[RMDB]
RNA sequence: GGGAACGACUCGAGUAGAGUCGAAAAGAUAUGGAACACACGACGGGCAGCUCAUCGAUCUAUCGUAACAUCUCGUCGGAAACGACGAGUGGAUAGGGAGAGCGAUGCGUCGUGUGUUCCUAAGUCACACUGUCUCUCCGUUCGCGGAGAGACAGUGAAAAGAAACAACAACAACAAC
Reactivity to DMS in 0.01 (KOAc 150mM, MgCl2 10mM, bicine 150mM(pH8.5), 24C), signal-to-noise 2, nucleotides 027 to 126: g000a000u010a280u020g020g000a040a020c000a000c000a000c010g000a020c000g030g010g050c260a250g000c010u000c010a300u000c200g010a030u010c010u010a000u010c000g020u020a060a120c190a010u000c000u000c020g010u000c000g000g000a010a050a130c010g020a010c010g000a010g040u000g000g000a000u000a010g020g000g020a030g030a020g060c000g020a120u010g020c000g020u010c000g030u000g010u000g010u000u000c000c010u020a060a070g000u000c020a300